Overview:
Chemical mapping of a 177-nucleotide RNA with 2A3 and DMS. Source: RMDB library OK2TRN, as collected in RNAgym. The RNA was probed in 150 mM KOAc, 10 mM MgCl2 and 150 mM bicine (pH 8.5) at 24 C. For 2A3 the reverse transcriptase was SuperScript II with manganese.
[RMDB]
RNA sequence: GGGAACGACUCGAGUAGAGUCGAAAAAGGCGGGGGGUUCAUCCUUCCCAACAGGGUCUGCCAGACAACCACGACCAACUAGUCCCAGAUAACCUUGAGGCCUGGGCACUGGCUGGGCCCCGAGGGCCCGUUAACGUCGUUUCGACGACGUUAACGGAAAAGAAACAACAACAACAAC
Reactivity to 2A3 in 0.01 (KOAc 150mM, MgCl2 10mM, bicine 150mM(pH8.5), 24C), signal-to-noise 2, nucleotides 027 to 126: a010g080g000c050g020g040g000g000g000g030u040u030c020a050u100c030c000u070u120c030c000c000a020a020c040a030g050g010g020u010c010u060g010c000c010a020g020a130c050a030a020c070c020a070c080g060a050c010c000a040a030c030u090a030g060u060c010c000c000a000g010a150u160a080a120c020c010u050u060g040a030g030g050c000c020u040g020g040g010c050a040c120u050g060g000c020u010g020g040g000c020c000c000c010g020a030g010g010g010c020
Reactivity to DMS in 0.01 (KOAc 150mM, MgCl2 10mM, bicine 150mM(pH8.5), 24C), signal-to-noise 4, nucleotides 027 to 126: a080g000g020c290g000g020g030g010g010g010u000u010c110a130u010c050c030u010u000c000c000c010a100a140c200a110g000g000g040u000c030u000g020c020c010a050g000a100c130a130a070c030c060a080c130g010a090c030c010a080a100c100u000a100g000u000c010c000c010a140g000a150u010a130a110c030c010u000u000g010a120g000g000c040c000u000g020g010g000c110a090c080u000g000g000c010u000g000g000g000c000c000c020c030g000a090g020g000g000c230